[RMDB]
RNA sequence: GGGAACGACUCGAGUAGAGUCGAAAAGCUCUGAGAAACAGAUCGAACAACAAAGAGAGAUCGAAAAUCUUAGGGGAGAGAACGAAUCUGUCGUCUUCUCUAGGACAUUGUCGAUCAGAUGUCCAAAGACCAUUCAUUGGUUCGCCGAUGAAUGGUCAAAAGAAACAACAACAACAAC
Reactivity to 2A3 in 0.01 (KOAc 150mM, MgCl2 10mM, bicine 150mM(pH8.5), 24C), signal-to-noise 7, nucleotides 027 to 126: g010c000u000c010u020g040a030g050a010a030a000c020a010g010a020u030c020g040a030a030c020a030a020c020a020a260a000g110a010g000a000g000a020u010c010g010a030a030a010a040u000c000u000u000a000g000g000g030g000a000g000a000g020a060a020c010g030a080a120u150c120u180g120u050c030g100u010c000u000u000c000u000c000u010a010g000g010a000c020a100u060u140g060u030c010g010a010u000c020a000g020a060u050g050u000c010c020a020a020a050
Reactivity to DMS in 0.01 (KOAc 150mM, MgCl2 10mM, bicine 150mM(pH8.5), 24C), signal-to-noise 5, nucleotides 027 to 126: g000c040u000c020u000g000a020g010a260a030a060c030a040g000a020u000c010g000a300a180c030a060a100c270a050a180a090g020a070g000a300g000a020u000c000g000a090a040a090a150u000c010u020u010a010g000g000g000g000a010g020a080g000a050a040c020g020a070a110u060c200u020g010u010c060g010u010c000u000u000c000u000c000u000a000g000g000a010c090a070u010u010g010u000c040g010a170u000c000a020g000a060u020g000u000c000c020a130a130a090
Structure probing data (2A3 and DMS) for a 177-nucleotide construct. Values cover nucleotides 27 to 126. 2A3 adducts were read by reverse transcription with SuperScript II with manganese. It was measured as part of the RMDB library OK1LIB. Conditions: 150 mM KOAc, 10 mM MgCl2 and 150 mM bicine (pH 8.5), 24 C.